The record gives the reactivity of an RNA of 207 nucleotides to 2A3 and DMS. It was measured as part of the RMDB library RNAMAK. For 2A3, 1,477 sequencing reads were counted. The RNA was probed in 150 mM KOAc, 10 mM MgCl2 and 150 mM bicine (pH 8.5) at 24 C. For DMS the reverse transcriptase was MarathonRT. High 2A3 reactivity points to a flexible backbone, as in loops and unpaired stretches.
RNA sequence: GGGAACGACUCGAGUAGAGUCGAAAAUAUAGUUCGCUAUAGAGAUCGGGGUCUUCUGCAACAGCGACGGCCUUUGAUCUACACUGAAGCCUCCACGGUGUAGGGAGGCGUCGACAUGCAGAAGACGGAGGCACCCAGUAGGUCACUUCGGUGACAAAGUAGGAAUAGGGUUCGCCCUAUUCCUACUAAAAGAAACAACAACAACAAC
Reactivity to 2A3 in 0.01 (KOAc 150mM, MgCl2 10mM, bicine 150mM(pH8.5), 24C), signal-to-noise 1, nucleotides 027 to 156: u120a010u030a010g090u050u050c170g000c050u020a010u030a070g060a040g020a130u100c080g000g000g040g040u000c020u010u000c010u010g010c030a120a070c070a290g170c040g030a020c020g300g230c000c000u300u190u050g020a010u000c000u010a000c010a000c000u010g040a110a030g030c000c010u020c000c000a000c030g030g000u010g020u010a000g010g000g000a000g000g030c000g000u000c000g020a160c030a120u040g000c000a010g000a010a000g010a020c010g000g000a010g010g020c010a060c000c000c020a070g120u250a100g020g190u010c000a010c020u050u080c260g120g010u000g000a000c000a000a150
Reactivity to DMS in 0.01 (KOAc 150mM, MgCl2 10mM, bicine 150mM(pH8.5), 24C), signal-to-noise 1, nucleotides 027 to 156: u000a070u000a050g020u010u000c090g040c040u030a090u000a070g020a130g010a100u010c010g000g000g030g010u000c000u000u010c010u010g000c050a100a120c230a210g010c090g000a040c050g010g000c000c040u010u030u000g000a080u020c000u000a040c010a000c040u000g070a020a090g020c090c000u010c030c010a300c030g000g000u000g060u000a030g020g000g010a020g090g050c000g020u000c020g020a070c070a260u000g030c010a050g040a020a020g000a060c050g010g010a040g090g040c070a120c020c030c010a300g000u000a210g050g030u010c000a010c010u000u010c260g040g000u020g000a080c000a010a080